[RMDB]
RNA sequence: GGGAACGACUCGAGUAGAGUCGAAAAUGCUAUUGUACGUCAACUUGAAAACCGUAAUGAUAUUGAGUUGAUCAUUAGGGAUCGUACUGAACUUGACCUCAUGUCUCAAUCCGCUGUGCAAAAAUUACAGCUAAUAGGGGUUCGCCCCUAUUAGCUGAAAAGAAACAACAACAACAAC
Reactivity to 2A3 in 0.01 (KOAc 150mM, MgCl2 10mM, bicine 150mM(pH8.5), 24C), signal-to-noise 2, nucleotides 027 to 126: u060g000c020u020a030u090u230g040u020a000c040g000u010c030a100a100c090u000u210g120a040a030a030a070c020c010g080u090a120a020u100g030a020u000a010u170u160g050a060g250u080u030g060a020u030c010a040u010u000a050g020g000g110a050u060c000g030u010a040c040u010g000a050a020c010u030u080g060a030c000c000u070c030a060u100g040u020c050u000c080a000a090u010c020c000g000c050u000g000u000g090c040a000a240a000a030a000u210u150a130
Reactivity to DMS in 0.01 (KOAc 150mM, MgCl2 10mM, bicine 150mM(pH8.5), 24C), signal-to-noise 2, nucleotides 027 to 126: u000g020c090u000a030u000u010g000u000a040c100g000u020c070a030a050c070u000u020g020a060a120a150a170c100c030g000u010a040a030u030g000a030u000a100u010u010g000a050g020u000u000g000a000u000c060a050u010u010a060g010g020g000a040u000c050g020u010a040c070u000g000a030a080c070u000u010g000a110c040c010u000c060a080u000g000u000c030u000c040a030a080u020c040c040g010c030u000g000u010g000c130a010a040a040a090a030u010u000a120